About this RNA: This 177-nucleotide RNA was probed chemically with 2A3 and DMS. Conditions: 150 mM KOAc, 10 mM MgCl2 and 150 mM bicine (pH 8.5), 24 C. 2A3 adducts were read by reverse transcription with SuperScript II with manganese. For 2A3, 1,293 sequencing reads were counted.

[RMDB]
RNA sequence: GGGAACGACUCGAGUAGAGUCGAAAAUGAUCCUGGGGGAGGCGGCGGAUGUGCGGUCGUUCAUGGAGACGAGUGUACUAGAAGUGCACCCUGCUUUCAAUGGUGACGGAGGGCGCCCACUUCGGGCCUUGCAUCCGAUAUUCGUAUCGGAUGCAAGAAAAGAAACAACAACAACAAC
Reactivity to 2A3 in 0.01 (KOAc 150mM, MgCl2 10mM, bicine 150mM(pH8.5), 24C), signal-to-noise 1, nucleotides 027 to 126: u140g000a040u060c000c000u020g000g030g000g000g000a030g060g010c080g060g000c030g000g040a060u060g030u080g050c010g030g110u060c030g020u070u060c030a100u150g080g020a020g010a060c020g000a080g070u030g010u000a020c050u030a080g230a300a000g040u020g040c010a000c010c030c000u070g030c020u060u000u070c060a030a090u090g120g020u040g040a040c010g000g040a040g010g030g000c020g010c010c000c000a030c000u060u050c000g020g010g010c000
Reactivity to DMS in 0.01 (KOAc 150mM, MgCl2 10mM, bicine 150mM(pH8.5), 24C), signal-to-noise 2, nucleotides 027 to 126: u010g010a080u000c010c020u000g020g020g020g020g010a090g030g020c060g010g040c080g000g010a070u010g010u000g010c070g030g010u000c050g030u000u000c030a130u010g020g010a070g000a050c050g000a040g010u000g010u010a020c020u000a200g010a110a170g000u000g010c040a010c030c000c010u010g020c010u000u000u000c070a100a110u020g030g020u000g010a040c090g010g020a070g000g000g010c110g010c040c020c010a080c150u000u000c070g010g010g020c070